[RMDB]
RNA sequence: GGGAACGACUCGAGUAGAGUCGAAAAGCACCGAAAUAUUUCAAUCAAAAUCAUUUAUCGUUUUGUUUAGCUAUUUUUUUCUCAAAUUAUCACUCUUUUCUUCCUUUUUCAUUCUCUCAAUUGUUCUUUUCCAAGAUAGUUUCGACUAUCUUGGAAAAAAAGAAACAACAACAACAAC
Reactivity to 2A3 in 0.01 (KOAc 150mM, MgCl2 10mM, bicine 150mM(pH8.5), 24C), signal-to-noise 4, nucleotides 027 to 126: g020c010a000c010c040g020a020a060a010u210a090u070u180u110c070a040a030u040c010a030a050a050a070u080c060a070u030u170u200a140u130c070g010u000u020u010u070g030u030u070u060a020g030c030u040a190u060u080u000u010u000u060u000c060u000c000a120a160a110u210u080a070u150c010a020c030u050c000u010u030u030u020c000u010u050c000c000u030u020u010u050u090c020a020u070u000c010u000c010u000c010a020a180u040u080g000u040u000c020u000
Chemical mapping of a 177-nucleotide RNA with 2A3.
The 2A3 profile rests on 1,786 reads.
The RNA was probed in 150 mM KOAc, 10 mM MgCl2 and 150 mM bicine (pH 8.5) at 24 C.
Values cover nucleotides 27 to 126.